[RMDB]
RNA sequence: GGGAACGACUCGAGUAGAGUCGAAAAGGAAGCCAUGCUCGACCCAACACUGGUAGCCAAGGCGGCUGCCAUCGAUGCCGAAACCGCGGCCAUCGUCGCCUAUCUGCGCAGCUACCAAGCGGUGCGGCGUUGUAAAGGGGUUCGCCCCUUUACAACGAAAAGAAACAACAACAACAAC
Reactivity to DMS in 0.01 (KOAc 150mM, MgCl2 10mM, bicine 150mM(pH8.5), 24C), signal-to-noise 4, nucleotides 027 to 126: g000g020a060a040g030c030c060a080u010g020c010u010c040g030a160c000c020c020a090a130c180a080c120u000g000g010u010a000g030c020c030a200a120g010g020c100g000g030c010u010g000c050c030a030u060c070g010a060u010g000c020c010g000a060a100a110c100c070g010c020g030g000c040c020a050u000c040g040u000c100g000c020c040u050a100u020c070u010g000c030g010c070a070g000c010u010a060c120c060a100a110g010c000g000g010u000g010c010g000g000
Reactivity to 2A3 in 0.01 (KOAc 150mM, MgCl2 10mM, bicine 150mM(pH8.5), 24C), signal-to-noise 8, nucleotides 027 to 126: g080g030a080a010g030c040c040a060u130g010c030u060c060g080a100c010c000c010a040a020c080a030c060u040g020g000u020a000g010c020c020a140a120g250g020c050g010g000c040u030g030c010c000a010u080c020g040a040u100g010c020c000g040a150a070a040c060c040g030c030g060g050c100c000a040u040c030g070u040c010g020c010c010u120a140u100c040u060g020c040g000c040a030g010c000u050a110c010c040a050a020g030c040g010g020u020g020c010g010g010